[RMDB]
RNA sequence: GGGAACGACUCGAGUAGAGUCGAAAAUUAGAGGUCUCGAUCACAGCGAGACCGGGAGAGACGCUCCCGGGCCGGGUUAGGAACCGGUGCGGCGGGUGGUAUAGGAGCCGGCCGGACCCGGCGAUAAAGAGGUAAAGAUAUUCGUAUCUUUACCUCUAAAAGAAACAACAACAACAAC
Reactivity to DMS in 0.01 (KOAc 150mM, MgCl2 10mM, bicine 150mM(pH8.5), 24C), signal-to-noise 4, nucleotides 027 to 126: u000u010a080g000a170g020g000u000c000u010c000g000a100u000c140a100c250a190g010c010g010a020g010a050c000c000g000g000g000a110g010a150g010a090c090g000c060u000c000c000c000g020g000g000c010c010g000g000g000u000u000a120g030g000a120a140c040c010g010g020u000g000c030g020g010c030g000g000g010u000g000g000u010a060u000a130g000g000a240g020c000c000g010g010c010c000g020g010a060c010c000c010g000g010c010g010a020u000a020a090
Reactivity to 2A3 in 0.01 (KOAc 150mM, MgCl2 10mM, bicine 150mM(pH8.5), 24C), signal-to-noise 2, nucleotides 027 to 126: u160u070a030g050a080g130g010u000c010u010c030g070a150u260c100a050c040a120g110c050g010a010g000a010c000c010g020g000g000a080g000a000g000a000c000g000c110u000c000c020c030g010g130g000c010c000g060g000g030u020u160a140g120g100a050a060c020c010g050g020u120g100c000g030g030c050g020g110g040u160g000g060u090a090u110a190g120g040a040g020c000c020g020g030c010c000g000g020a020c010c000c000g010g000c000g000a000u020a010a030

This 177-nucleotide RNA was probed chemically with DMS and 2A3. DMS adducts were read by reverse transcription with MarathonRT. Reactivities are rounded to 0.1 and cut off at 0 and 3. Values cover nucleotides 27 to 126.